An RNA of 207 nucleotides, treated with 2A3 and DMS and read out base by base. For 2A3 the reverse transcriptase was SuperScript II with manganese.
RNA sequence: GGGAACGACUCGAGUAGAGUCGAAAACUUGGGUGGAGACAUUUAGGAGUUAUCGGAAGAUGGCGGAGGUACCGACGCCAGUGGGCCGGAUGAAACGGGGUACCGAGAAUACGUGGAAAGUGCGGGGGUACGACAUGUAUGCUCAGCUUACGGCGAGGGAAUAUAUGUGUUUCGAUAUAUGUAUUCCAAAAGAAACAACAACAACAAC
Reactivity to 2A3 in 0.01 (KOAc 150mM, MgCl2 10mM, bicine 150mM(pH8.5), 24C), signal-to-noise 1, nucleotides 027 to 156: c030u040u070g020g010g030u050g000g050a060g030a030c050a100u070u050u080a040g010g010a040g030u100u100a090u090c040g030g020a040a030g030a050u060g000g020c020g000g020a010g020g010u030a060c020c010g050a020c030g010c000c010a000g040u030g010g020g000c000c000g020g000a050u030g020a010a020a030c020g000g000g000g020u000a030c000c010g000a000g020a050a010u060a020c020g000u040g010g040a060a000a010g050u030g040c020g000g010g010g000g010u050a010c000g000a010c000a000u020g020u020a010u040g030c010u000c050a030g010c000u050u010a020c000g020g010c010g000a040g010
Reactivity to DMS in 0.01 (KOAc 150mM, MgCl2 10mM, bicine 150mM(pH8.5), 24C), signal-to-noise 2, nucleotides 027 to 156: c040u010u020g010g010g030u010g010g020a130g020a060c050a080u000u010u020a120g020g010a140g020u000u000a070u000c020g000g030a070a100g010a090u000g010g000c040g010g030a130g020g040u010a070c070c000g000a130c030g000c000c010a080g040u000g010g030g030c000c020g040g030a120u000g010a090a040a050c050g000g020g030g010u010a020c040c000g010a070g010a060a070u000a010c030g040u000g000g000a100a020a080g020u000g020c000g000g000g020g010g000u020a070c010g010a040c050a050u000g020u000a040u020g010c030u010c020a150g000c050u000u010a090c060g020g010c020g030a110g020
The DMS profile rests on 4,561 reads. High DMS reactivity at an A or C suggests that its Watson-Crick edge is free. Source: RMDB library OK3TST, as collected in RNAgym.